[RMDB]
RNA sequence: GGGAACGACUCGAGUAGAGUCGAAAAUGUCUGUUAAAGUUUUGGGAGAUUAAUACUGCUCGCGUUCUUCUUUAGCAUCCGUUUUGGAUGCACCUUGAGGAACAAGGUGGGUAAUUUUCGUUUUGAAGUCUUAAUAUCAAUUCGUUGAUAUUAAGACAAAAGAAACAACAACAACAAC
Reactivity to DMS in 0.01 (KOAc 150mM, MgCl2 10mM, bicine 150mM(pH8.5), 24C), signal-to-noise 7, nucleotides 027 to 126: u010g000u000c090u010g010u010u010a060a130a190g000u000u000u010u000g010g000g000a060g010a030u010u000a040a100u020a110c020u000g000c010u010c030g010c290g000u000u000c010u000u000c010u000u000u010a240g000c000a010u000c000c000g020u010u010u030u030g010g010a010u000g010c000a010c200c120u010u000g010a030g000g000a040a040c010a110a220g000g010u000g010g010g000u010a020a020u010u000u000u000c040g020u000u000u000u000g010a140a160
Reactivity to 2A3 in 0.01 (KOAc 150mM, MgCl2 10mM, bicine 150mM(pH8.5), 24C), signal-to-noise 7, nucleotides 027 to 126: u100g030u000c060u040g120u070u090a100a080a090g030u040u070u160u130g050g020g000a050g000a030u060u090a080a100u140a230c020u030g030c020u030c070g040c030g020u010u010c000u010u020c010u040u090u090a040g000c010a000u000c000c020g170u040u070u160u300g000g000a000u000g000c000a030c000c010u030u050g010a010g000g030a030a020c020a030a030g040g000u040g010g000g010u020a030a030u030u060u020u110c060g030u030u010u010u070g080a140a020